Structure probing data (2A3 and DMS) for a 177-nucleotide construct.
[RMDB]
RNA sequence: GGGAACGACUCGAGUAGAGUCGAAAAUAUAAAUAAGAAGUCCGCGCAUCACCGGACGCACCGCGUGCAAUGCUACGUCGCGCGAGCGACGUAGCUGAUGCGUCGACGGCUAGCAAAAGCUAGCCAAAGUACUCCUAGUGUUCGCACUAGGAGUACUAAAAGAAACAACAACAACAAC
Reactivity to 2A3 in 0.01 (KOAc 150mM, MgCl2 10mM, bicine 150mM(pH8.5), 24C), signal-to-noise 2, nucleotides 027 to 126: u110a020u100a020a210a030u220a120a000g210a170a040g040u030c040c070g000c020g000c030a010u010c000a010c040c100g000g120a030c030g010c080a190c100c250g050c040g010u060g050c010a070a070u040g000c000u010a000c000g000u000c000g000c000g000c070g010a060g000c000g000a000c000g000u000a000g010c000u000g000a000u010g000c000g000u030c020g020a010c050g000g000c000u000a000g020c010a190a080a300a020g000c000u000a000g000c000c000a040a000
Reactivity to DMS in 0.01 (KOAc 150mM, MgCl2 10mM, bicine 150mM(pH8.5), 24C), signal-to-noise 1, nucleotides 027 to 126: u090a170u010a120a110a040u050a070a030g000a270a190g040u000c000c300g020c080g000c000a020u010c010a110c060c200g000g000a080c050g000c110a080c270c280g000c020g010u050g000c090a010a020u010g090c000u000a000c010g100u000c000g000c000g050c240g000a110g090c000g090a000c000g030u000a000g010c000u000g000a060u000g000c010g000u000c300g000a000c000g020g010c000u050a000g030c010a180a160a260a170g020c000u000a010g000c000c010a060a000

Annotation
2A3 adducts were read by reverse transcription with SuperScript II with manganese. For DMS the reverse transcriptase was MarathonRT. Source: RMDB library OK1LIB, as collected in RNAgym.